RNA sequence: GGGAACGACUCGAGUAGAGUCGAAAAGAUAUGGAACGUGACAGACAUGAAGGCUCGGAAACGAGCCUUCAACAGCUGUACGUUCCUAAGUCAAAUCCAAAACGUCAGUUCGCUGACGUUUUGGAAAGCAACGUAUUUAGUUCGCUAAAUACGUUGCAAAAGAAACAACAACAACAAC
Reactivity to DMS in 0.01 (KOAc 150mM, MgCl2 10mM, bicine 150mM(pH8.5), 24C), signal-to-noise 3, nucleotides 027 to 126: g000a020u000a230u000g000g000a020a010c000g030u000g000a030c000a010g000a130c120a210u000g000a000a000g010g020c010u000c010g000g010a040a040a110c000g000a010g010c000c000u010u010c000a010a040c250a160g010c000u000g000u000a010c000g010u000u000c000c000u000a020a060g010u000c020a110a090a160u000c000c000a000a010a000a010c000g000u000c000a010g010u000u010c240g020c010u000g000a010c000g000u000u000u000u000g010g010a010a040a080
Reactivity to 2A3 in 0.01 (KOAc 150mM, MgCl2 10mM, bicine 150mM(pH8.5), 24C), signal-to-noise 1, nucleotides 027 to 126: g030a000u040a010u060g000g010a020a000c010g030u100g300a080c050a010g070a080c040a100u030g000a000a000g010g000c010u010c010g010g000a030a010a000c010g010a000g000c010c000u010u000c000a020a000c010a000g000c000u000g000u010a010c000g000u000u000c000c010u000a010a000g010u000c010a020a030a180u000c000c000a020a000a010a000c000g000u000c000a020g010u030u190c240g020c170u000g000a000c000g010u000u000u000u000g000g020a000a030a000